[RMDB]
RNA sequence: GGGAACGACUCGAGUAGAGUCGAAAAGAUAUGGACUUGGAUUUAACGAACUACCGAUAUAUCGGAAACGAUAUGAUCGGCGUUUGUCAGUCCUAAGUCAAAAGGUUCCCGUUUCGACGGGAACCAAUCUAGUGUACACCUUCGGGUGUACACUAGAAAAAGAAACAACAACAACAAC
Reactivity to 2A3 in 0.01 (KOAc 150mM, MgCl2 10mM, bicine 150mM(pH8.5), 24C), signal-to-noise 2, nucleotides 027 to 126: g080a060u240a100u300g110g020a010c000u040u030g010g000a020u140u090u300a070a020c010g010a000a010c020u120a210c120c000g030a000u020a010u000a010u040c000g000g030a080a000a040c000g010a000u030a010u120g300a040u040c000g000g010c030g010u000u010u000g030u030c000a000g000u010c000c000u000a010a010g020u020c010a030a000a020a150g030g000u000u000c000c000c000g000u070u050u030c210g150a030c000g000g010g040a000a000c000c000a000a010
Reactivity to DMS in 0.01 (KOAc 150mM, MgCl2 10mM, bicine 150mM(pH8.5), 24C), signal-to-noise 3, nucleotides 027 to 126: g010a190u020a080u000g000g000a030c020u010u000g000g010a000u000u000u040a110a050c000g000a010a020c010u010a140c000c000g000a010u000a040u000a000u000c000g000g000a080a070a200c000g010a020u010a020u000g000a020u000c000g020g030c300g000u000u000u000g000u000c190a010g020u000c000c000u010a000a040g000u000c010a110a040a140a110g000g020u020u010c000c010c000g020u000u010u020c240g010a010c000g000g000g000a000a000c000c000a000a010
Chemical mapping of a 177-nucleotide RNA with 2A3 and DMS. The reactions ran in a buffer of 150 mM KOAc, 10 mM MgCl2 and 150 mM bicine (pH 8.5), at 24 C. 2A3 adducts were read by reverse transcription with SuperScript II with manganese. Values cover nucleotides 27 to 126.